[RMDB]
RNA sequence: GGGAACGACUCGAGUAGAGUCGAAAAGAUAUGGAUAUUGGAGCGAUAAGCAGGGUGUCGGAAACGACAUGCUGCUUUUGACGCUCAGGUCCUAAGUCAAAGUCAAGACGCUUCGGCGUCUUGACAACCAAGAUAAAAUCUUCGGAUUUUAUCUUGGAAAAGAAACAACAACAACAAC
Reactivity to 2A3 in 0.01 (KOAc 150mM, MgCl2 10mM, bicine 150mM(pH8.5), 24C), signal-to-noise 3, nucleotides 027 to 126: g020a010u080a050u180g010g010a050u120a160u300u300g270g030a020g000c000g030a040u020a140a010g000c000a010g090g060g000u010g000u000c010g010g010a090a010a050c000g000a000c010a010u080g090c010u000g000c000u010u000u010u030g020a000c000g010c000u000c000a000g050g020u000c000c010u040a170a030g040u030c080a180a060a020g000u010c000a010a000g000a000c010g000c020u040u110c280g180g000c000g010u020c000u000u000g000a000c000a010a000
Reactivity to DMS in 0.01 (KOAc 150mM, MgCl2 10mM, bicine 150mM(pH8.5), 24C), signal-to-noise 5, nucleotides 027 to 126: g000a040u010a300u000g000g010a020u000a070u010u010g030g010a010g000c000g020a170u000a020a010g010c000a000g000g010g040u000g010u000c000g010g010a120a070a220c000g000a010c000a000u000g000c010u000g010c000u000u000u000u000g020a180c050g010c000u000c000a030g010g000u000c000c000u000a050a150g010u000c030a060a100a170g010u000c000a000a000g000a020c000g010c000u000u010c240g030g010c000g010u000c000u000u000g010a000c010a030a080